[RMDB]
RNA sequence: GGGAACGACUCGAGUAGAGUCGAAAAGGUCAUCCUUCACUGGAUCGUGUGGAAGUCCUGCUCGGGGCGGAAGCAUUAAAACCAUUCGAGCUAGUCAAUGCGUGGCGUGUCUCUCCGCAGCGUGUUGUGUAUGAGAGUGGAUUCGUCCACUCUCAAACUGAAUAAAUAAGUUCGCUUAUUUAUUCAGAAAAGAAACAACAACAACAAC
Reactivity to DMS in 0.01 (KOAc 150mM, MgCl2 10mM, bicine 150mM(pH8.5), 24C), signal-to-noise 3, nucleotides 027 to 156: g000g000u000c040a100u000c020c010u000u010c070a110c080u000g020g020a060u000c040g010u010g050u000g020g020a150a140g000u000c030c020u000g020c110u010c080g030g000g010g020c030g020g020a210a150g010c050a120u000u010a050a090a140a130c010c020a140u000u000c040g000a060g000c030u000a080g010u000c040a040a060u010g010c020g000u010g010g010c040g040u000g000u010c040u000c040u020c080c000g020c020a070g020c040g010u000g010u010u000g030u000g020u000a120u010g010a020g000a020g070u000g010g020a060u000u000c300g000u000c010c000a010c000u000c000u000c000a000a030a080
Reactivity to 2A3 in 0.01 (KOAc 150mM, MgCl2 10mM, bicine 150mM(pH8.5), 24C), signal-to-noise 5, nucleotides 027 to 156: g040g010u090c020a040u060c030c000u110u110c050a050c140u060g070g050a110u100c080g020u030g010u030g030g010a020a020g010u020c010c020u040g060c060u050c080g030g000g040g000c020g020g020a010a000g020c010a010u050u190a020a040a030a050c020c000a030u060u090c080g030a010g080c120u120a050g200u100c050a030a020u030g030c030g040u020g020g000c030g010u040g040u030c030u020c020u000c070c010g030c050a060g030c030g010u020g010u020u000g000u000g020u040a110u110g000a000g000a000g000u000g000g000a010u020u060c100g030u030c010c000a000c000u000c000u000c000a000a000a000